[RMDB]
RNA sequence: GGGAACGACUCGAGUAGAGUCGAAAACGAGAUUGAAUUCGUCACGUAUUACAUCAAUAAGGCGAUGACAUGCGAAGACGCUCAGGCAACUGGCAUGCUUCGAGAGAUAUUCCUGCGGCUCAAUCCGAUUCCUAAGCCUGUGGCUCCUCCUGUGGAGACCUAUGACACCAUUCGUGGUGUCAUAGGUAAAAGAAACAACAACAACAAC
Reactivity to DMS in 0.01 (KOAc 150mM, MgCl2 10mM, bicine 150mM(pH8.5), 24C), signal-to-noise 2, nucleotides 027 to 156: c080g000a120g000a050u000u000g020a110a120u000u000c010g000u020c060a110c070g030u000a090u000u030a110c020a140u010c050a090a190u010a110a110g030g010c020g000a080u000g030a110c030a040u010g010c000g000a110a110g000a150c110g020c060u020c060a070g020g030c050a070a090c030u010g040g020c080a070u000g000c000u010u000c050g010a030g020a060g000a160u000a100u000u000c010c040u020g020c060g060g020c060u020c030a030a090u010c000c030g020a190u000u000c000c000u000a040a160g000c010c020u030g020u000g030g020c010u000c030c040u010c070c060u020g000u000g010g000a150g030
Reactivity to 2A3 in 0.01 (KOAc 150mM, MgCl2 10mM, bicine 150mM(pH8.5), 24C), signal-to-noise 5, nucleotides 027 to 156: c010g010a020g020a110u020u050g070a040a140u200u160c020g000u030c040a040c120g050u040a070u070u240a110c100a140u200c100a100a150u200a200a050g080g000c040g030a040u020g040a060c030a030u040g000c020g090a130a050g030a060c050g010c050u060c110a010g050g000c030a080a090c060u040g060g000c030a030u060g010c020u020u070c030g030a030g010a020g010a020u040a100u210u080c020c010u040g040c010g000g010c010u000c010a020a030u010c010c020g030a040u050u000c000c000u030a100a000g020c000c020u080g020u080g080g010c010u040c030c010u050c010c030u120g060u120g050g030a040g000
Structure probing data (DMS and 2A3) for a 207-nucleotide construct. For 2A3 the reverse transcriptase was SuperScript II with manganese. The RNA was probed in 150 mM KOAc, 10 mM MgCl2 and 150 mM bicine (pH 8.5) at 24 C. It was measured as part of the RMDB library OK3TST.